[RMDB]
RNA sequence: GGGAACGACUCGAGUAGAGUCGAAAAGAUAUGGACAUAUUGGACAUUAGCUGGAAUUCGGAAACGAAUUUAGCCACGAUGUCCACUGUAUGUCCUAAGUCAAAAGUUCGCAGUUCGCUGCGAACAAGAAGUGACAAUUGUUCGCAAUUGUCACUUCAAAAGAAACAACAACAACAAC
Reactivity to DMS in 0.01 (KOAc 150mM, MgCl2 10mM, bicine 150mM(pH8.5), 24C), signal-to-noise 4, nucleotides 027 to 126: g000a050u000a300u000g000g020a030c000a010u000a030u000u000g030g020a010c000a020u000u000a120g000c040u000g010g010a010a030u000u000c010g000g020a140a140a230c010g010a010a010u000u000u000a020g030c010c200a150c300g000a020u000g000u000c000c000a030c300u020g000u000a010u000g000u000c000c000u010a030a140g000u000c020a040a100a080a170g010u000u000c000g000c000a030g020u000u010c230g010c010u000g000c010g000a000a020c000a080a100
Reactivity to 2A3 in 0.01 (KOAc 150mM, MgCl2 10mM, bicine 150mM(pH8.5), 24C), signal-to-noise 3, nucleotides 027 to 126: g040a020u130a060u170g000g000a000c000a010u040a010u060u100g000g010a010c020a020u110u090a100g000c100u070g140g080a030a030u020u010c000g030g050a060a100a080c000g010a000a000u040u040u020a050g010c020c030a150c240g040a020u050g000u000c000c010a000c010u040g000u000a010u020g000u000c010c010u000a100a030g050u000c050a010a030a050a240g000u000u000c000g000c020a000g010u050u100c160g080c140u000g010c010g010a000a000c000a000a000

Chemical mapping of a 177-nucleotide RNA with DMS and 2A3. The reactions ran in a buffer of 150 mM KOAc, 10 mM MgCl2 and 150 mM bicine (pH 8.5), at 24 C.